[RMDB]
RNA sequence: GGGAACGACUCGAGUAGAGUCGAAAAGAAAAUUAACCAGCCAGACGCUUUCCUCGAUGACACACUGAAGCGCAGGGAGAAGAUCAUACGGAAGAACAAAUACAUAAGAUGAAUAAUCAAGUCGAAAGGAUUGGUGAGUAUUCGUGUUCACCGAUCCAAAAGAAACAACAACAACAAC
Reactivity to 2A3 in 0.01 (KOAc 150mM, MgCl2 10mM, bicine 150mM(pH8.5), 24C), signal-to-noise 9, nucleotides 027 to 126: g050a010a040a010a020u140u080a040a060c020c000a000g050c020c020a030g010a050c030g000c020u030u030u010c010c000u030c020g060a080u100g030a020c010a010c000a010c100u080g060a090a020g020c040g000c070a040g010g040g020a060g020a050a030g030a060u060c010a020u070a090c050g050g040a030a030g040a110a010c050a070a080a030u180a070c070a050u180a060a060g040a070u100g050a070a050u110a120a040u110c060a050a040g100u060c030g080a130a040a030
Reactivity to DMS in 0.01 (KOAc 150mM, MgCl2 10mM, bicine 150mM(pH8.5), 24C), signal-to-noise 9, nucleotides 027 to 126: g010a070a050a090a100u030u030a090a140c040c030a100g020c060c040a060g000a090c050g000c050u000u010u010c030c020u010c060g000a080u020g010a120c110a070c070a050c100u010g000a080a070g000c070g010c060a070g000g000g010a060g010a070a080g010a060u020c050a060u000a110c090g010g010a060a050g000a040a070c110a050a030a080u030a070c140a050u020a060a110g000a060u010g000a070a050u030a070a060u020c050a030a100g000u010c040g000a050a100a080